[RMDB]
RNA sequence: GGGAACGACUCGAGUAGAGUCGAAAAUGUUGAGUUCGCUCAACAAAAAAAUCCUAAGUCGGUGAGGACUUGGAUUUACGAAAUGGAGUCGGAAACGACGUUGAAAUUUCGUUGUCAGUCCCACCGAUAUGGAAAAAAACUGGUGUUCGCACCAGAAUAGUCAAUAUUAGUUCGCUAAUAUUGACUAAAAAGAAACAACAACAACAAC
Reactivity to DMS in 0.01 (KOAc 150mM, MgCl2 10mM, bicine 150mM(pH8.5), 24C), signal-to-noise 2, nucleotides 027 to 156: u020g030u010u000g000a040g020u000u000c300g020c000u000c000a010a000c010a000a010a040a160a080a160a190u000c030c000u000a110a300g010u000c000g000g010u020g020a130g020g010a060c000u020u020g040g000a000u000u000u000a010c010g010a030a010a020u000g000g010a300g060u010c010g010g010a180a080a280c010g030a020c020g000u010u000g010a130a200a070u000u000u000c020g020u000u010g000u000c010a030g000u000c010c000c000a030c070c000g020a000u000a080u000g000g010a000a030a110a160a070a070a190c040u000g010g030u000g020u000u010c110g030c010a040c050c010a020g000a090a300
Reactivity to 2A3 in 0.01 (KOAc 150mM, MgCl2 10mM, bicine 150mM(pH8.5), 24C), signal-to-noise 4, nucleotides 027 to 156: u090g000u000u000g000a010g010u090u090c140g090c050u020c020a030a010c000a000a020a040a010a000a010a120u060c050c010u070a140a040g020u000c010g020g010u000g040a300g040g000a010c010u060u150g130g000a030u240u170u190a000c000g000a000a000a000u020g000g020a030g000u000c000g000g030a080a070a090c010g010a010c060g010u130u040g010a020a020a020u000u000u000c000g000u000u010g020u010c000a000g000u000c000c000c000a000c010c020g000a000u000a000u000g010g040a010a050a000a030a010a030a070c000u010g000g030u020g050u070u090c300g030c110a000c000c000a000g010a010a020